[RMDB]
RNA sequence: GGGAACGACUCGAGUAGAGUCGAAAACAGACUCGAGCGAAAGCUCGGCGAAAGCCGCGUACAUGUGAGCGUCGGCGUGUGUACAGUCGACAGUUACUCUUCGGAGUAACAAUAGAAACAACAACAAAUGCCUCACUAGGUUCGCCUAGUGAGGCAUAAAAGAAACAACAACAACAAC
Reactivity to DMS in 0.01 (KOAc 150mM, MgCl2 10mM, bicine 150mM(pH8.5), 24C), signal-to-noise 1, nucleotides 027 to 126: c000a240g030a010c010u000c000g040a000g000c010g000a160a040a110g050c000u000c000g000g000c060g000a200a120a090g000c080c010g010c000g000u000a040c060a000u010g000u120g000a020g030c150g000u000c000g000g050c000g000u070g020u000g000u000a150c040a030g000u000c000g040a000c190a200g000u000u000a000c000u000c000u000u000c240g000g010a050g000u000a000a000c000a080a090u080a110g000a300a110a020c130a090a090c150a080a120c150a210a080
Reactivity to 2A3 in 0.01 (KOAc 150mM, MgCl2 10mM, bicine 150mM(pH8.5), 24C), signal-to-noise 1, nucleotides 027 to 126: c060a000g010a040c000u030c010g010a010g000c000g040a140a070a000g080c030u000c090g010g000c000g090a250a000a000g000c010c020g000c100g000u010a000c030a120u090g040u080g140a120g090c000g000u030c000g080g010c060g000u080g060u000g010u000a090c020a080g000u000c030g040a000c000a020g000u000u000a000c000u000c000u040u060c300g130g000a000g000u020a000a000c000a010a010u080a010g150a050a100a040c150a060a000c010a030a020c000a030a020